[RMDB]
RNA sequence: GGGAACGACUCGAGUAGAGUCGAAAAGUUGCUGGUUUACCAGAGGUUUUACUCUAAACUCGUCAAUAUCUCAAAUGUGGCGAUAUCGUUGAAUCAAUCUGUAUCUUCACUGCAACCUAUUGGAAACCCUCCACUGAGAAUUCGUUCUCAGUGGAGGAAAAGAAACAACAACAACAAC
Reactivity to DMS in 0.01 (KOAc 150mM, MgCl2 10mM, bicine 150mM(pH8.5), 24C), signal-to-noise 2, nucleotides 027 to 126: g010u000u010g010c000u000g000g040u000u010u000a110c140c050a030g000a040g000g000u000u020u010u000a080c100u000c140u010a050a100a100c200u010c030g020u000c010a040a090u010a080u000c040u010c190a080a060a070u010g020u000g010g000c100g010a060u010a050u000c260g020u000u000g000a090a150u020c070a080a070u000c020u020g030u000a070u000c040u000u000c030a020c030u000g020c080a040a050c060c030u010a160u010u020g000g000a040a090a110c100
Reactivity to 2A3 in 0.01 (KOAc 150mM, MgCl2 10mM, bicine 150mM(pH8.5), 24C), signal-to-noise 2, nucleotides 027 to 126: g070u070u050g000c010u020g020g060u050u070u100a090c080c050a000g000a040g060g010u040u110u090u200a020c000u000c010u070a120a140a070c040u000c010g020u020c020a050a050u060a080u090c100u030c010a060a090a070u270g020u030g030g000c010g010a000u010a040u030c070g030u060u050g080a130a100u050c060a060a070u010c050u030g020u030a020u010c020u040u080c040a050c160u020g000c000a010a030c010c000u060a190u130u160g080g070a090a090a100c000